[RMDB]
Chemical mapping of a 207-nucleotide RNA with DMS and 2A3. The DMS profile rests on 2,051 reads. For 2A3 the reverse transcriptase was SuperScript II with manganese. The data come from the RNA Mapping Database (RMDB), library M2RFPK.
RNA sequence: GGGAACGACUCGAGUAGAGUCGAAAACUCCACGCUGGGUAAUGGACGACGGCGGCGUGUGGCGAACAGGGAUACCGGUAGUCAGUGUCUGGAACAUCCCAAGGGGCGGCGGAGCUAGCACACCGACAAAACGGGCACAAGUUCGCUUGUGCCCGAAGAUUACUUAUCAGUUCGCUGAUAAGUAAUCAAAAGAAACAACAACAACAAC
Reactivity to DMS in 0.01 (KOAc 150mM, MgCl2 10mM, bicine 150mM(pH8.5), 24C), signal-to-noise 1, nucleotides 027 to 156: c050u010c020c020a070c000g080c040u000g070g050g030u000a090a120u000g010g000a070c030g000a050c030g000g030c090g020g020c010g030u000g020u000g000g000c010g030a090a070c050a050g030g040g020a140u000a150c020c020g020g010u000a120g020u000c060a110g050u020g000u000c020u020g030g020a050a130c040a120u000c010c000c010a080a070g050g020g040g040c020g000g080c060g030g010a170g030c060u000a070g050c030a070c040a110c030c000g020a060c130a010a060a060a140c050g030g020g070c000a030c010a000a040g040u000u000c290g010c040u000u030g020u000g000c000c000c010g020a010a020
Reactivity to 2A3 in 0.01 (KOAc 150mM, MgCl2 10mM, bicine 150mM(pH8.5), 24C), signal-to-noise 2, nucleotides 027 to 156: c020u030c010c000a040c050g080c030u030g030g040g040u150a090a090u080g050g030a050c050g010a010c020g040g010c030g020g010c040g040u090g030u040g020g050c090g010a080a020c050a110g050g000g010a020u080a100c020c020g010g060u050a040g070u030c040a020g040u010g030u070c020u030g020g030a060a080c030a090u000c000c000c040a060a050g010g020g020g030c020g010g000c010g000g010a020g010c020u050a020g000c050a000c010a030c070c020g020a030c060a010a080a010a020c020g020g010g000c010a010c010a000a010g030u070u120c130g040c120u000u010g010u000g000c000c010c000g020a000a000